[RMDB]
RNA sequence: GGGAACGACUCGAGUAGAGUCGAAAAGAAAGAAAGAAAAUGCAUUCCGUAUGGAAGACUAGUGAUUUUGUUGUUUGGUCUUUGUUAAUAACAAUAAAUCCCUUGUCUCCUAACGGCGCGCAUUGAAUUUCACCUCUUCAUUCGUGAAGAGGUGAAAAAAAGAAACAACAACAACAAC
Reactivity to DMS in 0.01 (KOAc 150mM, MgCl2 10mM, bicine 150mM(pH8.5), 24C), signal-to-noise 4, nucleotides 027 to 126: g000a120a110a100g010a060a100a090g020a090a090a010a000u000g000c020a040u000u010c000c000g000u030a180u010g000g000a030a040g010a010c010u010a010g000u000g000a020u000u010u010u040g060u000u000g010u000u000u010g000g020u020c220u020u020u030g010u030u040a050a050u020a010a000c010a000a010u010a020a010a010u010c000c080c000u000u010g000u000c000u000c000c000u000a260a040c000g010g010c220g020c100g010c000a010u000u000g010a080a170
Reactivity to 2A3 in 0.01 (KOAc 150mM, MgCl2 10mM, bicine 150mM(pH8.5), 24C), signal-to-noise 5, nucleotides 027 to 126: g150a020a070a010g140a040a090a000g120a020a200a000a000u000g000c000a010u070u000c000c010g000u010a020u050g000g030a140a120g000a010c010u010a000g010u010g010a020u040u080u070u120g020u020u000g020u000u010u060g170g050u110c080u170u130u060g100u100u100a160a080u140a090a000c000a000a010u030a030a010a000u000c030c010c000u000u010g000u000c000u000c000c010u040a080a030c010g000g010c000g010c010g000c020a000u020u020g000a030a040
The record gives the reactivity of an RNA of 177 nucleotides to DMS and 2A3.
Reactivities are given for positions 27 through 126.